[RMDB]
Structure probing data (2A3 and DMS) for a 177-nucleotide construct. For DMS, 1,967 sequencing reads were counted. Conditions: 150 mM KOAc, 10 mM MgCl2 and 150 mM bicine (pH 8.5), 24 C.
RNA sequence: GGGAACGACUCGAGUAGAGUCGAAAAAUGCCUAUGCUUGAAUGUAUAGUUUUACUCCUGGAAAGGAGCUAGACUUGUCUGUGUUUGAAGCACUUACGCUGAUGAUCGCUUUUGCGACAUUAGUCGUCGAUUAUUGCCGAUUCGUCGGCAAUAAUCGAAAAGAAACAACAACAACAAC
Reactivity to 2A3 in 0.01 (KOAc 150mM, MgCl2 10mM, bicine 150mM(pH8.5), 24C), signal-to-noise 4, nucleotides 027 to 126: a010u190g020c000c000u100a100u100g030c040u090u190g060a030a030u120g090u040a040u010a120g000u000u000u020u050a020c010u010c000c000u020g070g130a230a050a000g010g000a030g000c000u000a000g000a010c000u020u050g060u110c070u050g150u080g070u030u050u090g160a080a010g000c010a000c060u100u080a030c050g000c000u010g000a030u060g060a230u020c030g010c100u070u180u180u300g000c030g010a010c000a000u000u020a010g060u070c030g020u050
Reactivity to DMS in 0.01 (KOAc 150mM, MgCl2 10mM, bicine 150mM(pH8.5), 24C), signal-to-noise 1, nucleotides 027 to 126: a040u000g000c000c000u000a100u030g000c000u000u000g000a080a040u040g000u010a090u010a010g000u000u000u000u000a240c000u010c000c000u020g010g040a070a190a050g000g000a000g010c150u000a040g000a030c000u000u000g000u030c130u070g010u000g000u000u010u040g010a050a060g020c000a070c210u040u040a180c080g000c020u000g040a020u000g000a100u000c000g030c000u000u000u050u050g020c020g010a000c000a000u000u000a000g010u030c020g010u010
Values are in units of 0.01, from 0 to 300, in steps of 10.